Chemical mapping of a 177-nucleotide RNA with 2A3 and DMS. The RNA was probed in 150 mM KOAc, 10 mM MgCl2 and 150 mM bicine (pH 8.5) at 24 C. 2A3 adducts were read by reverse transcription with SuperScript II with manganese. For DMS the reverse transcriptase was MarathonRT.
[RMDB]
RNA sequence: GGGAACGACUCGAGUAGAGUCGAAAAUCAGGUAAGAUGUCACAGAAAAACACCUGUGAUACGAUACCAGGUGGUGAUCCAAGGUACCUUCCAGCAGAGAGCACUUCCUAUGCAGUUGCAAAGGUGACCAUACCCUCAACUUCGGUUGAGGGUAUGGAAAAGAAACAACAACAACAAC
Reactivity to 2A3 in 0.01 (KOAc 150mM, MgCl2 10mM, bicine 150mM(pH8.5), 24C), signal-to-noise 2, nucleotides 027 to 126: u050c020a010g010g000u030a040a030g000a130u020g000u000c020a020c010a020g130a090a160a050a080a010c050a040c020c000u000g000u020g020a030u000a030c000g010a010u030a030c020c010a030g080g020u040g010g070u080g050a060u070c040c010a010a030g120g010u030a080c000c000u030u010c030c030a060g020c020a020g060a010g000a010g100c030a000c050u030u020c000c010u040a070u060g000c010a070g000u140u070g030c000a040a010a040g060g010u050g020a010
Reactivity to DMS in 0.01 (KOAc 150mM, MgCl2 10mM, bicine 150mM(pH8.5), 24C), signal-to-noise 3, nucleotides 027 to 126: u000c020a060g010g010u020a020a050g000a300u000g010u000c020a000c030a020g000a070a040a120a210a110c250a090c250c000u000g010u000g010a020u040a040c040g010a300u000a030c030c000a060g000g010u000g020g010u000g000a060u010c070c020a070a090g000g020u000a040c070c030u020u000c060c090a070g010c100a050g000a110g000a050g010c050a030c050u020u000c030c040u010a120u000g010c030a140g000u000u010g040c050a040a070a060g020g000u000g010a190